[RMDB]
RNA sequence: GGGAACGACUCGAGUAGAGUCGAAAAGAUAUGGAGGGUAUGCGAACCUACCCACCCGUUGUUUCGGAAACGAAAUGCGGAGGGGAGGUAUAUACCCUCCUAAGUCAAACCGGACUUCGGUCCGGAACCAUAUGCGGAACUUCGGUUCCGCAUAUGGAAAAGAAACAACAACAACAAC
Reactivity to DMS in 0.01 (KOAc 150mM, MgCl2 10mM, bicine 150mM(pH8.5), 24C), signal-to-noise 1, nucleotides 027 to 126: g010a020u030a300u000g000g000a000g020g000g060u000a000u010g040c300g010a110a080c000c010u000a090c010c000c000a050c040c000c010g000u010u010g030u000u000u000c000g010g000a100a090a120c010g000a000a020a000u010g010c000g040g010a280g020g000g050g010a050g010g000u010a110u010a050u000a010c000c000c000u000c000c000u000a000a090g000u000c020a080a150a170c010c020g000g000a010c000u000u010c250g030g000u000c000c000g020g030a010a110
Reactivity to 2A3 in 0.01 (KOAc 150mM, MgCl2 10mM, bicine 150mM(pH8.5), 24C), signal-to-noise 2, nucleotides 027 to 126: g010a020u080a020u110g040g000a000g010g060g050u020a000u020g110c250g170a160a110c030c000u300a300c090c000c020a060c030c010c000g070u280u300g050u040u110u030c000g000g000a000a110a110c000g010a000a000a000u030g000c020g000g040a100g060g010g000g000a000g020g050u000a040u020a000u000a060c000c000c000u000c000c000u000a000a000g010u020c000a000a020a070c010c000g000g000a000c030u060u130c300g070g010u000c020c000g000g000a010a000
An RNA of 177 nucleotides, treated with DMS and 2A3 and read out base by base. For 2A3, 2,106 sequencing reads were counted.